[RMDB]
RNA sequence: GGGAACGACUCGAGUAGAGUCGAAAAAGCCGCAAGCACCGUUGCGAAGGCACUGGGGCAGGUUUCGGCGCUUCACACGGUCAACGGACGGGCGCCGACCACGCGCUGUGCAAGCUUCUUCAUGUUCCACCUAUCAGUCGUUCGCGACUGAUAGGUGAAAAGAAACAACAACAACAAC
Reactivity to DMS in 0.01 (KOAc 150mM, MgCl2 10mM, bicine 150mM(pH8.5), 24C), signal-to-noise 3, nucleotides 027 to 126: a020g000c000c010g020c030a040a210g000c060a090c120c210g010u010u000g000c060g010a130a080g000g030c000a010c010u010g030g050g000g090c070a090g020g020u010u020u000c010g010g000c000g000c000u020u000c080a060c240a300c030g000g000u110c190a190a180c040g010g010a170c300g000g010g030c000g010c000c010g010a030c030c030a090c110g030c000g000c000u000g000u000g050c010a040a140g000c040u020u000c030u000u040c050a150u030g010u000u010c020
Reactivity to 2A3 in 0.01 (KOAc 150mM, MgCl2 10mM, bicine 150mM(pH8.5), 24C), signal-to-noise 7, nucleotides 027 to 126: a000g060c030c010g030c030a050a050g050c030a040c100c090g100u060u080g000c050g060a100a050g190g000c010a020c070u130g000g010g050g010c020a060g000g030u040u230u090c010g000g000c000g000c010u250u300c050a120c040a050c040g180g040u300c180a300a110c080g040g020a000c030g010g020g000c000g000c000c000g000a000c010c000a040c040g000c000g010c010u030g010u010g020c030a050a110g000c010u060u030c010u110u070c050a100u160g040u050u000c010